[RMDB]
An RNA of 177 nucleotides, treated with DMS and read out base by base. The RNA was probed in 150 mM KOAc, 10 mM MgCl2 and 150 mM bicine (pH 8.5) at 24 C. The data come from the RNA Mapping Database (RMDB), library TTRINS. DMS (dimethyl sulfate) methylates the pairing face of unpaired adenines and cytosines. For DMS, 1,177 sequencing reads were counted.
RNA sequence: GGGAACGACUCGAGUAGAGUCGAAAAGAUAUGGACUAACGGACCUCCAUGCCUCUCGAUAAGCUCCGUGUCGGAAACGACACCGAGCUUUUGACGAGAUGCAUGGAGGUCCGUUAGUCCUAAGUCACGAUUAGUACUGGUUCGCCAGUACUAAUCGAAAAGAAACAACAACAACAAC
Reactivity to DMS in 0.01 (KOAc 150mM, MgCl2 10mM, bicine 150mM(pH8.5), 24C), signal-to-noise 1, nucleotides 027 to 126: g000a020u000a300u000g000g000a000c010u000a010a000c000g000g000a010c020c010u000c000c000a020u000g010c000c060u000c000u000c010g030a110u000a030a030g000c000u000c000c250g040u000g000u020c000g030g000a170a060a220c030g010a020c000a000c000c280g010a030g000c000u010u000u020u010g030a240c060g000a010g000a010u000g000c000a010u020g000g000a000g000g010u000c010c020g030u000u000a000g000u020c000c000u000a010a050g010u000c060a240